[RMDB]
RNA sequence: GGGAACGACUCGAGUAGAGUCGAAAAGAAACAAGCGGAAACGCGAAAUAAGUCUGUGAGCGAAUAUAGAAAGCAUCGAUGGAAUAUAUGGCUCACAGACGAAAGAGAAAUCCAUCGAUGCGAAAAAGGGAAACUAUUACUUCGGUAAUAGUUUCCCAAAAGAAACAACAACAACAAC
Reactivity to DMS in 0.01 (KOAc 150mM, MgCl2 10mM, bicine 150mM(pH8.5), 24C), signal-to-noise 1, nucleotides 027 to 126: g030a140a040a090c140a130a120g000c000g000g000a040a200a150c000g090c000g050a080a070a000u010a190a210g010u000c000u000g000u000g000a000g000c000g010a120a120u080a180u080a140g030a090a080a150g000c000a000u000c000g000a000u000g000g040a010a020u080a100u010a020u030g030g000c020u000c000a000c080a000g000a050c000g010a000a050a140g000a130g000a070a190a090u000c000c000a010u000c000g020a020u000g010c000g010a000a000a090a040a050
Reactivity to 2A3 in 0.01 (KOAc 150mM, MgCl2 10mM, bicine 150mM(pH8.5), 24C), signal-to-noise 3, nucleotides 027 to 126: g100a000a120a000c060a000a050g060c000g000g080a050a040a000c040g030c040g020a050a090a020u200a120a040g010u000c000u030g000u000g000a000g000c050g090a220a020u300a010u050a120g300a110a140a010g010c000a000u000c000g020a000u000g050g060a150a000u130a040u030a050u290g190g000c020u000c000a000c000a000g010a000c000g000a000a010a000g130a000g010a020a110a050u020c000c000a000u000c000g000a000u000g000c000g010a010a010a000a030a000